[RMDB]
RNA sequence: GGGAACGACUCGAGUAGAGUCGAAAAAUAUUGGUGUCUACAUUAGUAUGUCACUUGUAUUAGUCAUUGUAGUGAAGAGAUUGUACAACCCAUCACUUUCUAACUUUGCGUUAGCAUUGUGCAGUGGAACGGUCUUCCUUCGGGAAGACCAAAAGAAACAACAACAACAAC
Reactivity to 2A3 in 0.01 (KOAc 150mM, MgCl2 10mM, bicine 150mM(pH8.5), 24C), signal-to-noise 2, nucleotides 027 to 129: a000u050a010u000u060g020g000u000g000u000c030u020a000c030a080u110u040a080g070u030a080u300g020u030c000a000c000u000u020g000u050a030u040u000a030g040u030c020a010u000u100g070u000a020g040u000g050a030a000g000a010g010a040u080u090g010u100a020c020a010a080c020c000c020a010u080c010a010c000u070u110u040c070u030a110a120c000u020u000u280g080c070g070u010u030a010g000c010a030u000u090g000u010g080c000a040g000u000g010g040a090a020c130
Reactivity to DMS in 0.01 (KOAc 150mM, MgCl2 10mM, bicine 150mM(pH8.5), 24C), signal-to-noise 4, nucleotides 027 to 129: a040u040a030u000u000g020g030u010g000u080c010u010a060c020a100u050u020a100g040u030a000u070g030u030c040a020c040u050u040g000u020a050u020u020a120g010u000c040a070u020u050g050u030a020g010u030g050a040a060g010a080g000a080u010u080g020u000a070c150a050a090c090c020c000a110u060c030a100c120u040u030u030c040u000a050a050c020u010u070u020g020c170g000u110u000a040g050c080a020u190u050g030u030g010c290a050g000u010g030g020a040a070c000